[RMDB]
RNA sequence: GGGAACGACUCGAGUAGAGUCGAAAACAAGCGAGGAAAUGCUCGUCCUAGUAUUGAACCUACUGGAUAGUAGGGAUCAAUACUAAAAGCUGGACGGCAGAUUAGACUGGGAAGUCAUGAACAGCUCGUAAGUACAAUCUUUCGAGAUUGUACUUACAAAAGAAACAACAACAACAAC
Reactivity to DMS in 0.01 (KOAc 150mM, MgCl2 10mM, bicine 150mM(pH8.5), 24C), signal-to-noise 9, nucleotides 027 to 126: c090a110a080g000c080g010a090g010g010a100a110a080u000g000c020u030c010g010u000c000c000u000a020g010u000a000u000u000g010a010a120c000c000u000a000c010u000g010g020a110u060a020g020u000a000g000g010g010a110u000c000a010a000u010a000c010u000a050a040a100a140g010c240u010g000g000a010c000g010g000c000a040g000a140u020u020a070g010a120c020u000g010g040g010a120a020g010u020c050a070u020g010a110a070c070a080g000c060u010c170
Reactivity to 2A3 in 0.01 (KOAc 150mM, MgCl2 10mM, bicine 150mM(pH8.5), 24C), signal-to-noise 9, nucleotides 027 to 126: c060a050a030g080c040g090a060g030g130a070a080a060u080g010c080u120c150g000u000c000c010u000a000g000u000a000u000u000g010a010a010c000c000u010a010c010u060g160g170a220u250a300g000u000a000g000g000g020a050u030c000a000a000u000a000c000u000a000a010a010a030g110c100u050g000g000a000c000g000g000c000a000g000a010u090u110a040g030a070c020u010g010g030g050a070a020g030u070c010a020u040g040a070a030c020a020g020c020u070c110